Conditions: 150 mM KOAc, 10 mM MgCl2 and 150 mM bicine (pH 8.5), 24 C. Structure probing data (DMS and 2A3) for a 177-nucleotide construct.

RNA sequence: GGGAACGACUCGAGUAGAGUCGAAAAGAACGCAUUGCACAUACUAUCAGCGUAUGGAAUGAGUCUCUACUUUUUCGCUGAUAAGUAGAUUCAUGUAUAGCGGAACGUGAAGGCUCGCGAUGUGUUAGAUAGUUAUGUUAUUCGUGACGUGGCUAUCAAAAGAAACAACAACAACAAC
Reactivity to DMS in 0.01 (KOAc 150mM, MgCl2 10mM, bicine 150mM(pH8.5), 24C), signal-to-noise 9, nucleotides 027 to 126: g010a050a030c020g010c020a010u000u010g010c030a170c040a050u000a010c000u010a120u030c150a110g010c160g020u020a020u010g010g010a120a100u040g000a030g010u000c040u010c030u010a040c020u000u010u010u010u010c000g010c010u000g010a050u020a030a070g020u010a080g010a140u040u020c080a060u020g010u010a070u030a040g010c020g010g000a020a020c300g000u000g000a030a030g000g000c020u000c030g030c010g000a010u000g010u000g010u010u000a060
Reactivity to 2A3 in 0.01 (KOAc 150mM, MgCl2 10mM, bicine 150mM(pH8.5), 24C), signal-to-noise 9, nucleotides 027 to 126: g130a020a000c010g000c010a010u000u030g000c020a010c000a050u020a010c010u070a090u280c100a050g120c030g070u020a020u030g040g070a090a130u230g010a010g030u000c010u000c010u070a060c020u120u110u020u030u110c010g000c020u030g060a070u050a170a030g070u090a040g060a120u100u130c070a090u130g080u100a060u110a090g040c030g020g020a010a010c020g010u010g030a050a010g030g000c020u020c030g000c010g000a010u010g010u000g010u020u010a030
The DMS profile rests on 109,916 reads.